Source: RMDB library TTRDES, as collected in RNAgym. This 177-nucleotide RNA was probed chemically with DMS and 2A3. The DMS profile rests on 8,813 reads. Reactivities are given for positions 27 through 126.
RNA sequence: GGGAACGACUCGAGUAGAGUCGAAAAGAUAUGGAGUCCGUAGUAGCGAUGAGUAUGACGUCGGAAACGACGUAUACGAGCUACACGGACUCCUAAGUCAAAAGCUGCCUUGUUCGCAAGGCAGCAAGAUUUCUUGUAGGUUCGCCUACAAGAAAUCAAAAGAAACAACAACAACAAC
Reactivity to DMS in 0.01 (KOAc 150mM, MgCl2 10mM, bicine 150mM(pH8.5), 24C), signal-to-noise 4, nucleotides 027 to 126: g010a030u000a220u010g010g000a000g010u000c000c010g020u000a140g020u000a010g030c010g020a200u020g020a140g000u000a000u000g010a020c000g020u000c000g000g010a040a050a120c000g000a010c010g020u000a010u000a000c000g000a050g020c010u000a000c010a020c010g000g000a010c000u000c000c000u000a000a050g000u000c020a120a110a130a160g010c000u000g000c000c000u000u000g000u010u020c280g010c010a000a010g000g010c010a000g010c010a010a020
Reactivity to 2A3 in 0.01 (KOAc 150mM, MgCl2 10mM, bicine 150mM(pH8.5), 24C), signal-to-noise 4, nucleotides 027 to 126: g010a010u030a020u080g000g000a000g000u000c000c020g040u160a170g000u010a010g090c030g130a300u180g050a230g030u000a010u090g300a090c000g000u010c000g010g010a000a020a030c000g000a000c000g000u000a000u000a000c000g000a040g000c000u000a000c000a000c010g010g000a000c000u000c000c000u010a000a000g000u000c000a000a020a030a150g000c000u010g000c000c010u000u030g040u090u170c260g000c230a000a000g000g000c000a000g010c000a000a010